Record summary
Source: RMDB library OK2TRN, as collected in RNAgym. This 177-nucleotide RNA was probed chemically with 2A3 and DMS.
RNA sequence: GGGAACGACUCGAGUAGAGUCGAAAAAUCCGGGAUUCCCUAGGAAGCACGUACUUUCCGUUGAUGCACCAGGACACCAGGGAGGUAGCUGCCGACUGUCUGAGCUCACUUAAGGAGUUGAGGAUACGCUAGCAUGACACUUCGGUGUCAUGCUAGCAAAAGAAACAACAACAACAAC
Reactivity to 2A3 in 0.01 (KOAc 150mM, MgCl2 10mM, bicine 150mM(pH8.5), 24C), signal-to-noise 1, nucleotides 027 to 126: a000u100c000c030g000g010g000a070u010u010c030c000c040u030a030g000g050a030a000g040c030a030c100g060u200a040c000u090u110u040c000c030g050u110u050g050a040u080g040c000a010c080c000a110g070g000a050c010a050c030c000a030g010g000g030a020g010g010u030a060g000c030u020g000c030c000g060a050c060u060g040u000c000u040g020a010g000c010u020c010a130c070u090u100a060a030g160g000a030g030u050u080g130a020g010g010a030u050a120c110
Reactivity to DMS in 0.01 (KOAc 150mM, MgCl2 10mM, bicine 150mM(pH8.5), 24C), signal-to-noise 2, nucleotides 027 to 126: a140u000c010c070g000g000g000a220u000u000c010c020c000u000a110g010g000a080a040g040c070a070c130g060u000a100c100u000u000u000c070c050g010u000u010g000a100u010g010c080a140c130c050a040g000g020a150c040a080c050c020a080g020g000g020a070g010g000u000a030g020c080u010g020c000c000g000a080c170u010g000u000c050u010g020a140g020c030u010c040a050c070u010u000a060a080g010g000a050g020u000u020g010a100g020g010a090u010a060c210
The reactions ran in a buffer of 150 mM KOAc, 10 mM MgCl2 and 150 mM bicine (pH 8.5), at 24 C.